[RMDB]
RNA sequence: GGGAACGACUCGAGUAGAGUCGAAAAAUGCGUAAAUAAAUAUAACUAUACCCGCCUCUUCUCCACAAAUGAAAAUAUACAGCCGCAGCGCUACGUAAAGAGCGACACGUACGAAGCAGGCAGGUUAUACCAGCAUAGUGUUCGCACUAUGCUGGUAAAAAGAAACAACAACAACAAC
Reactivity to 2A3 in 0.01 (KOAc 150mM, MgCl2 10mM, bicine 150mM(pH8.5), 24C), signal-to-noise 3, nucleotides 027 to 126: a000u070g010c060g020u100a070a110a050u160a000a260a000u250a220u060a110a090c070u070a010u020a130c030c000c000g010c000c000u000c020u020u010c030u050c070c020a030c090a080a190a110u170g070a060a010a120a000u220a040u040a100c050a030g040c010c010g080c090a050g000c030g030c070u050a020c060g080u100a050a240a010g080a050g030c010g020a000c040a000c070g020u100a000c050g000a000a000g000c110a020g010g000c030a010g000g000u000u000a000
Reactivity to DMS in 0.01 (KOAc 150mM, MgCl2 10mM, bicine 150mM(pH8.5), 24C), signal-to-noise 2, nucleotides 027 to 126: a150u000g000c070g000u050a090a100a090u000a040a020a060u050a130u040a120a130c100u000a080u040a120c040c020c030g000c000c000u000c050u070u000c030u000c110c160a170c110a060a040a010u000g020a090a020a060a010u030a120u050a120c200a100g000c070c000g000c090a050g000c030g070c110u000a060c050g030u000a000a070a090g010a100g030c070g000a060c130a000c070g020u000a050c090g010a090a010g020c010a030g000g020c000a010g000g010u010u020a170